[RMDB]
RNA sequence: GGGAACGACUCGAGUAGAGUCGAAAAGAUAUGGAUCAAUCAUUAGAUCUUGGAUUUAACGUCGGAAACGACGUUUGUCAGAUCUAAUGAGUUGAUCCUAAGUCAAACUCAGGCUUCGGCCUGAGAACGCACUAUUCGUCUUCGGACGAAUAGUGCGAAAAGAAACAACAACAACAAC
Reactivity to 2A3 in 0.01 (KOAc 150mM, MgCl2 10mM, bicine 150mM(pH8.5), 24C), signal-to-noise 1, nucleotides 027 to 126: g050a020u160a010u260g000g000a010u010c000a010a010u010c000a030u000u040a000g000a030u000c030u200u300g100g030a030u300u300u140a020a000c010g000u000c000g040g010a110a000a130c000g000a000c000g010u000u000u000g000u010c000a000g000a000u050c000u020a000a000u000g000a030g010u000u000g000a000u010c000c000u000a070a010g020u010c060a090a060a030c000u000c000a010g040g010c020u030u300c300g210g000c000c000u000g000a000g000a000a000
Reactivity to DMS in 0.01 (KOAc 150mM, MgCl2 10mM, bicine 150mM(pH8.5), 24C), signal-to-noise 1, nucleotides 027 to 126: g000a020u000a300u030g000g030a000u000c010a010a060u000c010a010u000u000a000g000a000u000c000u000u010g000g020a010u000u000u010a010a000c030g020u000c010g000g000a150a070a280c000g000a000c000g020u000u000u000g020u000c010a010g020a040u000c000u020a010a000u000g010a070g000u000u000g010a010u000c000c000u030a030a110g010u000c030a150a080a300c010u000c000a010g010g030c010u000u000c300g010g020c000c000u010g010a010g000a110a300
Source: RMDB library TTRDES, as collected in RNAgym. An RNA of 177 nucleotides, treated with 2A3 and DMS and read out base by base. The 2A3 profile rests on 2,034 reads. Conditions: 150 mM KOAc, 10 mM MgCl2 and 150 mM bicine (pH 8.5), 24 C. For DMS the reverse transcriptase was MarathonRT.